[RMDB]
About this RNA:
The record gives the reactivity of an RNA of 177 nucleotides to 2A3 and DMS. The data come from the RNA Mapping Database (RMDB), library TTRDES. High 2A3 reactivity points to a flexible backbone, as in loops and unpaired stretches. DMS adducts were read by reverse transcription with MarathonRT. Reactivities are given for positions 27 through 126. In probing experiments dimethyl sulfate is read out at A N1 and C N3, which are open when not base-paired. The reactions ran in a buffer of 150 mM KOAc, 10 mM MgCl2 and 150 mM bicine (pH 8.5), at 24 C.
RNA sequence: GGGAACGACUCGAGUAGAGUCGAAAAGAUAUGGAGUGUCUGUACAUCUCGAUGAAACUGAUCGGAAACGAUCAGUGGAGAGAUUGACAGAGCACUCCUAAGUCAAAUCAGUUCUUCGGAACUGAAAGACUCUAAGAAGGUUCGCCUUCUUAGAGUCAAAAGAAACAACAACAACAAC
Reactivity to 2A3 in 0.01 (KOAc 150mM, MgCl2 10mM, bicine 150mM(pH8.5), 24C), signal-to-noise 3, nucleotides 027 to 126: g040a030u110a070u190g000g000a000g010u010g000u000c000u020g050u020a130c000a040u020c010u010c030g300a300u070g000a020a000a020c000u000g000a000u000c000g020g020a060a060a080c010g000a020u000c000a000g000u020g000g000a030g000a000g000a000u050u160g020a010c000a000g100a100g070c000a000c000u020c000c000u000a020a000g020u020c020a000a000a230u030c000a000g010u000u000c010u020u150c300g150g000a000a010c000u000g000a010a000a010
Reactivity to DMS in 0.01 (KOAc 150mM, MgCl2 10mM, bicine 150mM(pH8.5), 24C), signal-to-noise 2, nucleotides 027 to 126: g000a050u020a300u000g000g000a020g030u010g020u000c000u010g010u000a110c040a040u000c000u000c000g000a100u010g020a170a180a020c000u010g000a000u000c000g010g000a100a100a220c000g020a020u010c010a000g000u000g010g000a010g010a010g000a000u000u010g030a000c000a010g010a120g030c000a010c000u010c000c000u000a020a070g010u000c030a120a200a200u020c000a010g000u000u000c000u010u000c250g010g010a010a010c000u000g000a020a090a140